Structure probing data (DMS and 2A3) for a 177-nucleotide construct.
[RMDB]
RNA sequence: GGGAACGACUCGAGUAGAGUCGAAAAGGGUGCCGCAACAAGGAGAGGAGGACGGAGUGGGGCGAGUGGAGCGUCAAAGGGGAUGUCAUCGCCGCCGAAUCUGCUCGUGGGACAUCCCCUUCGAUGCGGAGCCUUCAUAAUUCGUUAUGAAGGCUCCAAAAGAAACAACAACAACAAC
Reactivity to DMS in 0.01 (KOAc 150mM, MgCl2 10mM, bicine 150mM(pH8.5), 24C), signal-to-noise 7, nucleotides 027 to 126: g000g010g010u010g010c070c040g010c110a100a080c200a120a130g000g000a110g000a140g010g020a110g010g000a100c110g000g000a140g020u020g010g000g000g000c070g000a060g010u020g000g000a150g010c000g010u010c000a020a020a010g010g000g010g000a000u000g010u000c000a090u010c030g010c020c120g000c040c170g010a070a110u040c100u020g000c040u000c160g010u000g000g000g000a020c010a010u000c000c000c000c000u000u000c010g010a020u000g000c070
Reactivity to 2A3 in 0.01 (KOAc 150mM, MgCl2 10mM, bicine 150mM(pH8.5), 24C), signal-to-noise 9, nucleotides 027 to 126: g050g010g030u090g040c030c010g070c040a060a110c040a100a090g100g020a070g010a040g070g030a040g030g020a050c060g010g010a080g030u120g010g020g020g010c040g010a020g030u100g030g070a050g020c000g020u000c000a010a000a000g000g000g000g010a000u000g000u010c060a140u130c130g040c060c010g020c020c030g080a090a180u100c060u140g030c040u050c070g010u050g020g010g000a000c000a000u000c000c000c000c000u000u010c000g000a000u000g000c020

For 2A3 the reverse transcriptase was SuperScript II with manganese.
For DMS the reverse transcriptase was MarathonRT.
High 2A3 reactivity points to a flexible backbone, as in loops and unpaired stretches.
Conditions: 150 mM KOAc, 10 mM MgCl2 and 150 mM bicine (pH 8.5), 24 C.